The record gives the reactivity of an RNA of 177 nucleotides to 2A3 and DMS. For DMS the reverse transcriptase was MarathonRT. Reactivities are given for positions 27 through 126. The DMS profile rests on 2,268 reads. For 2A3 the reverse transcriptase was SuperScript II with manganese. The reactions ran in a buffer of 150 mM KOAc, 10 mM MgCl2 and 150 mM bicine (pH 8.5), at 24 C.
RNA sequence: GGGAACGACUCGAGUAGAGUCGAAAAGCUCUAUCCUUCGGGAUAGAGCAAACGCUACGAUUGACGGAGAAGCCGGACCUGAGGUUCAGCAUAGUCGGGCUAAAAGUCACAUGUUCGCAUGUGACAAUCUACAUCAUCACUUCGGUGAUGAUGUAGAAAAAGAAACAACAACAACAAC
Reactivity to 2A3 in 0.01 (KOAc 150mM, MgCl2 10mM, bicine 150mM(pH8.5), 24C), signal-to-noise 2, nucleotides 027 to 126: g000c000u010c000u000a020u020c020c030u020u080c220g130g000g000a000u000a000g000a000g010c000a000a000a000c030g000c030u210a120c000g080a080u060u120g110a060c070g110g010a140g080a200a000g040c000c000g000g030a030c000c030u090g080a100g140g000u070u050c020a010g000c000a030u000a040g020u040c000g000g010g010c010u050a060a060a050a050g000u000c000a000c000a000u010g060u030u020c260g000c070a000u000g000u000g000a010c000a000a020
Reactivity to DMS in 0.01 (KOAc 150mM, MgCl2 10mM, bicine 150mM(pH8.5), 24C), signal-to-noise 2, nucleotides 027 to 126: g010c000u010c000u010a000u000c000c000u000u020c200g040g000g000a020u000a030g000a020g020c010a010a020a070c130g000c030u000a070c050g000a120u000u000g000a130c100g010g010a120g000a110a160g000c030c020g030g000a050c030c010u010g000a080g060g000u000u010c000a050g030c110a100u010a070g010u000c020g000g000g030c040u000a040a070a100a140g000u000c000a020c000a020u000g010u000u010c140g000c000a000u000g000u010g000a010c010a010a050